[RMDB]
Structure probing data (2A3) for a 207-nucleotide construct. The RNA was probed in 150 mM KOAc, 10 mM MgCl2 and 150 mM bicine (pH 8.5) at 24 C.
RNA sequence: GGGAACGACUCGAGUAGAGUCGAAAAGGAGUACUACAUCAAGACCUGCAUCCUGGAGAAGUUAGAGUGGCAUACCGGUGCUAUGUUUGCGAUCGUCUUUCCGUUGCUGCUGGUCAUCGCGGUCUCACUGCUGCUAGUUUCAGCGGUACAACGUUGCGAAACGUCGAAAGUUCGCUUUCGACGUUUCAAAAGAAACAACAACAACAAC
Reactivity to 2A3 in 0.01 (KOAc 150mM, MgCl2 10mM, bicine 150mM(pH8.5), 24C), signal-to-noise 1, nucleotides 027 to 156: g090g070a000g060u110a080c130u060a070c060a140u130c050a110a090g020a040c000c000u010g020c010a050u030c000c000u050g040g010a110g000a080a010g110u140u120a030g000a010g050u030g000g000c000a010u070a120c050c030g040g070u050g000c020u010a030u100g000u030u070u150g080c050g050a110u030c040g070u030c040u020u100u000c010c010g050u030u020g040c020u000g000c000u000g010g000u050c020a090u070c070g010c000g020g040u020c020u010c110a040c010u000g010c000u000g000c020u020a020g020u060u070u020c030a000g040c000g010g010u050a000c030a060a010c050g020u040u000g000c010